[RMDB]
RNA sequence: GGGAACGACUCGAGUAGAGUCGAAAAAGUUUGUAUUAGUGCUGUUAAAUUCUCCCAGUACAUGCCUAUUGGUGUUUACAGACGAGUAUGGUAUAGACCAUAUAUUACUAUUCUCUCUCUCAGGAGAGGAGAAUAGAUGCAUACAAAGGAGAAGCAAUCCCGUAUGAUAUUUCGAUAUCAUACGGGAAAAAGAAACAACAACAACAAC
Reactivity to DMS in 0.01 (KOAc 150mM, MgCl2 10mM, bicine 150mM(pH8.5), 24C), signal-to-noise 2, nucleotides 027 to 156: a150g010u020u000u000g010u010a070u000u000a120g040u000g030c040u010g020u010u000a090a120a200u000u000c010u000c020c010c030a190g000u000a070c050a060u000g020c030c050u020a150u000u000g040g040u000g030u000u010u000a130c060a050g020a050c030g030a170g040u010a020u010g010g030u000a160u000a120g030a110c020c000a020u000a040u000a080u010u000a120c020u000a030u000u000c010u000c010u000c000u000c020u010c270a280g050g020a030g010a060g010g020a010g010a010a030u000a000g010a060u000g040c020a070u000a090c030a050a090a030g000g010a070g020a050a080g030c100a070a270
Reactivity to 2A3 in 0.01 (KOAc 150mM, MgCl2 10mM, bicine 150mM(pH8.5), 24C), signal-to-noise 1, nucleotides 027 to 156: a000g020u000u130u080g110u070a110u080u120a170g000u030g000c000u020g070u060u080a110a150a180u090u010c020u000c000c020c000a000g000u000a020c010a030u160g000c000c060u110a200u120u250g090g000u020g020u160u130u040a020c010a050g030a050c020g010a010g060u000a000u000g010g010u030a080u110a300g260a030c000c060a000u000a000u010a000u000u210a030c000u000a000u000u000c000u000c000u000c000u000c020u010c210a140g050g070a000g010a000g060g000a010g010a000a000u000a000g000a050u060g000c050a060u100a180c020a110a030a030g000g020a010g030a000a000g060c010a010a010